[RMDB]
RNA sequence: GGGAACGACUCGAGUAGAGUCGAAAACAUCUUGUCCUAUAUCCUCAACAAAGGACUGAUCAAUUUUUAGCUGGUCCAAAGGCAGCUUUCGCAGACAGUUUAAAGAGGAGAAACCAGUGCCAAAAUCCAGUGUAAUGGGAUUCGUCCCAUUACACUGAAAAGAAACAACAACAACAAC
Reactivity to 2A3 in 0.01 (KOAc 150mM, MgCl2 10mM, bicine 150mM(pH8.5), 24C), signal-to-noise 4, nucleotides 027 to 126: c010a090u050c060u070u110g040u030c000c010u040a060u050a060u210c010c010u070c020a050a070c040a090a280a060g030g010a020c020u020g050a130u050c090a160a190u030u080u040u250u250a020g000c000u040g060g220u070c040c050a150a090a070g060g030c000a010g000c000u040u050u100c080g000c030a030g020a120c010a030g020u010u080u100a040a100a020g050a040g050g010a030g050a040a030a010c030c020a020g030u040g120c000c010a030a100a010a120u020c050
Reactivity to DMS in 0.01 (KOAc 150mM, MgCl2 10mM, bicine 150mM(pH8.5), 24C), signal-to-noise 4, nucleotides 027 to 126: c090a080u010c050u010u010g000u000c020c010u000a120u000a180u010c050c010u000c030a080a160c160a070a150a130g010g010a010c020u000g010a120u000c080a080a050u010u010u010u000u010a080g010c000u000g010g010u010c050c200a080a070a210g000g000c030a030g010c020u000u000u000c170g010c160a130g000a060c040a050g000u000u010u000a030a050a150g010a060g010g010a050g000a070a130a060c040c040a010g030u000g010c030c030a050a080a090a110u010c120